[RMDB]
RNA sequence: GGGAACGACUCGAGUAGAGUCGAAAAGGGAUCUCUCAGUAUUCUGUGGUGAAUAAGGAAAUGAGGAGACUGAACAAUGGUGAUGGACACACAGGAAUAUUUCAACCCAAGAGCUGGUUAACCUCUAUCUUUGUAAACCAUUCGUGGUUUACAAAGAAAAAGAAACAACAACAACAAC
Reactivity to DMS in 0.01 (KOAc 150mM, MgCl2 10mM, bicine 150mM(pH8.5), 24C), signal-to-noise 5, nucleotides 027 to 126: g000g000g000a080u000c030u000c030u010c040a070g020u000a070u010u000c020u010g010u010g010g020u000g010a090a070u010a080a110g000g000a040a080a090u000g010a080g020g010a120g010a130c060u000g010a070a060c100a100a080u000g010g020u000g000a130u010g010g010a090c080a070c070a060c070a060g000g000a080a080u010a050u000u000u010c090a070a100c030c010c020a090a080g010a060g010c070u000g000g000u000u000a050a100c080c020u000c050u000a130
Reactivity to 2A3 in 0.01 (KOAc 150mM, MgCl2 10mM, bicine 150mM(pH8.5), 24C), signal-to-noise 3, nucleotides 027 to 126: g010g020g010a040u020c030u000c000u000c090a000g020u040a150u140u000c010u040g100u110g080g070u120g050a140a120u190a130a090g080g020a070a070a070u080g020a050g050g030a020g020a030c050u040g030a090a010c060a070a170u110g070g000u040g020a050u080g100g010a020c020a000c000a000c000a070g090g050a060a010u040a060u100u140u040c040a090a070c000c000c010a020a020g020a020g000c040u050g040g000u020u030a020a020c000c000u030c010u050a090